[RMDB]
RNA sequence: GGGAACGACUCGAGUAGAGUCGAAAAGCGGAAAAGAGUGCGUGGUAGCACAAACCAUACCAAUCCGCGGCACAAGGUCGCACAUGCACAGCUUCGCCUGUGCAAAGCGAACAAGGCGAACAAAGAACCAUAUGCGUCCAUUCGUGGACGCAUAUGGAAAAGAAACAACAACAACAAC
Reactivity to 2A3 in 0.01 (KOAc 150mM, MgCl2 10mM, bicine 150mM(pH8.5), 24C), signal-to-noise 2, nucleotides 027 to 126: g010c000g000g050a120a020a030a020g230a040g020u090g030c050g010u020g030g110u070a050g120c070a010c070a080a010a030c000c000a030u090a070c020c010a010a030u000c000c000g000c000g040g000c030a040c010a250a060g040g000u000c000g000c000a010c010a160u060g000c000a000c000a010g020c000u190u200c140g040c020c000u000g000u000g000c000a020a000a000g000c000g010a070a000c000a040a000g060g010c020g020a050a000c030a150a100a040g070a060a050
Reactivity to DMS in 0.01 (KOAc 150mM, MgCl2 10mM, bicine 150mM(pH8.5), 24C), signal-to-noise 3, nucleotides 027 to 126: g020c000g000g000a050a110a150a070g000a080g000u030g050c090g100u010g000g000u040a120g000c130a040c110a050a160a120c090c050a060u010a070c100c080a110a190u000c030c000g000c010g000g000c170a080c080a010a190g000g020u020c000g020c000a070c200a230u020g000c000a000c030a000g020c010u060u050c290g000c180c020u000g000u000g000c010a010a040a130g000c000g000a000a020c040a070a130g000g000c030g070a110a010c130a070a200a180g030a090a180